This 207-nucleotide RNA was probed chemically with 2A3 and DMS. For DMS the reverse transcriptase was MarathonRT. The RNA was probed in 150 mM KOAc, 10 mM MgCl2 and 150 mM bicine (pH 8.5) at 24 C. Reactivities are given for positions 27 through 156. The DMS profile rests on 6,841 reads.
[RMDB]
RNA sequence: GGGAACGACUCGAGUAGAGUCGAAAAGAUUGAGAGAGUCGAGGGAAAACGGGAAGAAGCGGCCGAGGACGUUGACGCUUUGGAUGUGCUGCAGUUGACUAUCGAAUCACCAGUGGUUAUCUGAGCAGGGUUGAGAGCAGCAAAUAGCCCACUGACAAUGAUUAGCAGAUUUCGAUCUGCUAAUCAUAAAAGAAACAACAACAACAAC
Reactivity to 2A3 in 0.01 (KOAc 150mM, MgCl2 10mM, bicine 150mM(pH8.5), 24C), signal-to-noise 4, nucleotides 027 to 156: g060a030u110u180g010a050g010a010g000a010g080u080c050g020a040g020g010g000a020a060a020a060c060g020g010g010a060a060g030a060a020g060c030g050g000c050c040g010a050g000g030a010c030g020u020u050g030a020c020g030c020u080u060u080g040g010a040u070g040u040g020c030u020g010c020a050g000u050u050g040a040c010u050a050u180c060g090a110a040u100c050a050c080c010a030g010u020g010g030u060u060a020u080c010u020g020a020g000c020a050g010g000g080u040u060g020a030g000a000g070c010a000g000c010a020a090a010u040a020g010c000c010c020a030c040u060g020a010c060a100
Reactivity to DMS in 0.01 (KOAc 150mM, MgCl2 10mM, bicine 150mM(pH8.5), 24C), signal-to-noise 3, nucleotides 027 to 156: g000a100u010u020g010a110g000a100g000a100g020u000c070g020a120g010g020g000a040a010a080a080c080g020g010g010a090a110g010a100a080g020c050g050g020c020c060g010a110g000g010a020c050g000u000u000g010a080c060g000c070u000u000u020g010g010a110u010g030u000g020c030u000g000c020a080g010u000u000g000a070c040u080a120u000c080g010a110a110u010c050a050c050c010a080g040u000g030g000u000u010a040u000c030u000g000a090g000c050a130g020g010g010u020u000g000a070g000a120g030c010a070g000c030a020a050a090u000a120g000c030c010c010a050c060u000g000a150c120a100